[RMDB]
RNA sequence: GGGAACGACUCGAGUAGAGUCGAAAAACGCCAGGCACCGCGGCUGUUGCGCGCCAGCGUCUCACGUGUCUGCUCAAUGCGCAGUCUUUCCAGCUUCACGACGGCCGACUUCUCCUCUGCGCGACGGCCCUACGCCCGGUUUCGACCGGGCGUAGGGAAAAGAAACAACAACAACAAC
Reactivity to 2A3 in 0.01 (KOAc 150mM, MgCl2 10mM, bicine 150mM(pH8.5), 24C), signal-to-noise 1, nucleotides 027 to 126: a000c040g020c010c000a040g020g000c070a040c060c030g000c030g020g020c070u060g010u070u090g010c010g000c010g010c040c030a050g000c020g060u040c010u020c010a080c060g110u160g040u000c000u040g060c020u070c080a140a120u180g070c030g000c000a000g020u020c000u000u030u000c010c010a000g050c000u050u000c070a000c040g070a050c040g030g000c020c020g010a120c020u060u000c000u000c000c000u030c020u080g020c030g000c020g020a000c000g050g000